Structure probing data (DMS and 2A3) for a 207-nucleotide construct. The DMS profile rests on 3,396 reads. The reactions ran in a buffer of 150 mM KOAc, 10 mM MgCl2 and 150 mM bicine (pH 8.5), at 24 C.
RNA sequence: GGGAACGACUCGAGUAGAGUCGAAAACAUGGGUGACACCCAGCCAGUUUUUAAUGCCAGUUCCUCUGGCAGUUUUUAAUUUAGGCACUCGGAAGUGAAACCCGGACAUUCACUGGAAAUGACUUUAGGACAAGACCUGCUGGCCAUGAGCUGAGAACAAAAUAUCCAUGUUCGCAUGGAUAUUUUGAAAAGAAACAACAACAACAAC
Reactivity to DMS in 0.01 (KOAc 150mM, MgCl2 10mM, bicine 150mM(pH8.5), 24C), signal-to-noise 2, nucleotides 027 to 156: c050a130u000g000g010g030u000g020a300c040a160c020c010c000a180g030c010c040a120g010u010u000u010u000u000a040a050u000g000c000c010a010g010u000u000c220c170u010c020u010g010g030c020a010g020u000u000u010u010u020a020a100u000u000u000a110g040g020c010a050c100u010c130g000g030a120a070g020u000g010a070a100a080c030c010c070g000g000a070c110a180u000u000c020a070c010u030g000g050a120a100a060u010g000a070c040u000u010u010a080g050g010a100c060a040a070g010a090c030c010u000g000c030u000g000g000c030c040a070u000g000a170g010c020u010g010a130g010a100a230
Reactivity to 2A3 in 0.01 (KOAc 150mM, MgCl2 10mM, bicine 150mM(pH8.5), 24C), signal-to-noise 2, nucleotides 027 to 156: c040a090u060g010g040g020u010g050a020c010a060c050c010c000a000g000c010c010a000g010u010u050u000u090u150a050a080u090g010c000c000a000g040u140u080c040c010u100c070u010g010g000c000a000g000u000u030u030u050u110a050a030u030u040u160a060g000g030c010a040c070u140c100g070g050a160a110g040u020g000a040a030a040c010c000c000g000g010a030c040a040u080u060c030a030c090u050g060g040a030a090a140u050g050a050c040u120u060u100a080g050g000a030c040a100a000g040a050c030c020u010g040c030u030g000g000c030c040a060u110g030a020g000c020u060g080a050g020a140a020